[RMDB]
The record gives the reactivity of an RNA of 177 nucleotides to 2A3 and DMS. Values cover nucleotides 27 to 126. Source: RMDB library OK1LIB, as collected in RNAgym. 2A3 adducts were read by reverse transcription with SuperScript II with manganese. The RNA was probed in 150 mM KOAc, 10 mM MgCl2 and 150 mM bicine (pH 8.5) at 24 C. For 2A3, 3,907 sequencing reads were counted.
RNA sequence: GGGAACGACUCGAGUAGAGUCGAAAAGUGCGCUAGAGACGUUGGGGAGCCAAAGAACUCGAUGUGUAAACGGAGGAACAUGUUGGGAACAUCCCUCUGACUUGAGCGACCCCAAUACUUGGAAGUAAGCUACCAGUUAUUUCGAUAACUGGUAGCUAAAAGAAACAACAACAACAAC
Reactivity to 2A3 in 0.01 (KOAc 150mM, MgCl2 10mM, bicine 150mM(pH8.5), 24C), signal-to-noise 5, nucleotides 027 to 126: g110u140g010c060g010c040u030a040g010a000g060a140c030g040u040u040g000g000g010g010a010g040c050c020a090a110a030g040a090a060c010u000c060g080a120u130g050u060g030u150a110a160a050c070g110g030a050g030g040a080a020c020a040u020g020u040u020g080g010g030a050a000c000a040u030c050c030c000u000c000u030g100a120c000u010u040g010a030g040c000g090a300c000c030c000c000a030a060u090a100c070u020u080g070g050a080a020g040u100a040
Reactivity to DMS in 0.01 (KOAc 150mM, MgCl2 10mM, bicine 150mM(pH8.5), 24C), signal-to-noise 4, nucleotides 027 to 126: g020u050g020c010g040c000u010a150g000a100g010a110c050g000u030u010g020g020g010g020a300g040c090c120a060a070a060g010a030a150c030u000c030g000a030u010g040u020g020u040a060a050a130c050g000g000a090g010g000a040a010c100a020u000g020u020u000g010g000g000a300a150c150a110u000c040c010c000u010c060u000g020a150c030u000u000g000a090g000c000g000a070c030c000c000c020a030a060u050a020c150u030u000g020g000a130a130g030u020a040